[RMDB]
RNA sequence: GGGAACGACUCGAGUAGAGUCGAAAAUAGAUCCAUGCUGUCGUGAUGUCGAUCUGCUCCAAGACAUCAGUCUUUUGACUAGGCUCAUUAGAGCGACAGCAACGGAGCAGAUUUUGGAUCUAGAAAAGGGAGUGAGGUAGUUCGCUACCUCGUUCCCAAAAGAAACAACAACAACAAC
Reactivity to DMS in 0.01 (KOAc 150mM, MgCl2 10mM, bicine 150mM(pH8.5), 24C), signal-to-noise 9, nucleotides 027 to 126: u010a010g010a000u000c000c000a100u020g020c000u000g000u000c010g020u030g010a020u000g010u000c010g000a080u000c010u000g000c000u000c000c000a100a130g000a010c000a020u010c030a300g010u000c000u000u000u010u010g010a020c020u030a170g010g010c130u000c000a060u010u010a030g000a020g010c020g000a010c000a010g000c020a070a080c190g000g000a010g000c010a000g000a070u010u010u010u010g000g000a000u000c000u000a020g000a050a070a090a120
Reactivity to 2A3 in 0.01 (KOAc 150mM, MgCl2 10mM, bicine 150mM(pH8.5), 24C), signal-to-noise 8, nucleotides 027 to 126: u040a000g000a000u000c000c000a030u060g010c020u020g010u030c020g150u080g060a040u030g010u020c010g020a030u010c010u010g000c000u000c010c020a060a010g010a010c010a020u030c010a060g040u010c000u040u160u070u140g030a040c040u080a130g120g000c020u000c010a060u080u160a030g000a010g030c020g000a010c010a010g000c000a010a040c080g000g000a000g000c010a000g010a030u150u140u050u080g000g000a000u000c000u000a020g090a020a120a020a030